[RMDB]
RNA sequence: GGGAACGACUCGAGUAGAGUCGAAAAGGUGGAUUCACAGGAAACUGCCGAGGCGCUGCCGUUCGGCUCGGACCGGCCAUAUGGGACGCCCGUUCCCGGCGGCAUCCUCAUUGGUGCUGACGUCCCCAUAGUUAGCGUGGUUCGCCACGCUAACUAUAAAAGAAACAACAACAACAAC
Reactivity to DMS in 0.01 (KOAc 150mM, MgCl2 10mM, bicine 150mM(pH8.5), 24C), signal-to-noise 2, nucleotides 027 to 126: g020g030u030g010g020a100u000u010c080a170c120a090g000g020a090a050a100c070u000g000c120c080g000a030g010g000c050g060c080u000g000c000c000g010u000u020c070g010g020c140u010c000g010g010a060c300c030g020g010c040c000a160u010a060u020g010g000g000a110c040g000c090c000c030g000u010u000c110c000c010g000g010c020g000g000c030a020u010c000c060u000c080a180u000u000g010g010u000g000c060u000g010a080c150g000u010c010c010c030c170
Reactivity to 2A3 in 0.01 (KOAc 150mM, MgCl2 10mM, bicine 150mM(pH8.5), 24C), signal-to-noise 1, nucleotides 027 to 126: g020g030u070g030g060a110u070u100c040a060c040a170g010g140a150a070a010c050u070g030c060c020g030a010g040g030c120g000c100u070g060c000c010g000u070u230c000g000g000c000u000c000g010g020a030c060c040g040g000c030c020a100u180a150u300g080g000g020a020c020g000c060c010c000g000u040u020c020c020c010g030g010c000g000g010c000a070u300c030c050u070c010a080u030u270g020g000u060g020c050u020g000a010c050g030u040c000c050c020c000